[RMDB]
RNA sequence: GGGAACGACUCGAGUAGAGUCGAAAACAGCACAGACAGAUUGACCUAUUGGGGUGUUUCGCGAGUGUGAGAGGGAAGCGCCGCGGCCUGUAUUUCUAGACCUGCCCUUCGCCUGGUUCGUGGCGCCCUCCUUUGACUCGUUCGCGAGUCAAAGGAGAAAAGAAACAACAACAACAAC
Reactivity to DMS in 0.01 (KOAc 150mM, MgCl2 10mM, bicine 150mM(pH8.5), 24C), signal-to-noise 2, nucleotides 027 to 126: c090a100g000c020a050c060a070g000a120c100a150g010a060u000u020g010a040c040c000u010a100u010u050g030g010g010g010u020g000u010u020u000c050g000c070g000a080g020u010g000u000g000a190g010a040g000g000g010a120a230g000c020g000c000c010g010c040g040g010c000c000u020g020u010a090u030u000u000c080u060a080g040a180c040c030u010g020c000c000c000u000u030c110g020c070c020u000g000g000u010u020c020g090u000g030g040c020g000c020c120
Reactivity to 2A3 in 0.01 (KOAc 150mM, MgCl2 10mM, bicine 150mM(pH8.5), 24C), signal-to-noise 2, nucleotides 027 to 126: c060a000g090c030a030c000a020g210a050c030a020g050a120u030u060g050a040c030c000u030a050u050u120g070g000g000g000u030g040u030u060u060c040g020c020g080a090g050u080g000u030g030a080g000a020g000g050g040a060a000g000c000g000c010c000g010c000g010g000c010c010u050g080u140a200u030u100u030c060u040a040g070a110c000c040u010g020c020c000c020u020u010c000g000c030c010u010g030g030u110u220c000g020u000g000g010c010g000c000c000
The data come from the RNA Mapping Database (RMDB), library RFM100. This 177-nucleotide RNA was probed chemically with DMS and 2A3. The DMS profile rests on 2,422 reads. For DMS the reverse transcriptase was MarathonRT. As a SHAPE reagent, 2A3 marks flexible, mostly unpaired nucleotides at the ribose 2'-OH. The 2A3 profile rests on 1,195 reads. The reactions ran in a buffer of 150 mM KOAc, 10 mM MgCl2 and 150 mM bicine (pH 8.5), at 24 C. Values cover nucleotides 27 to 126.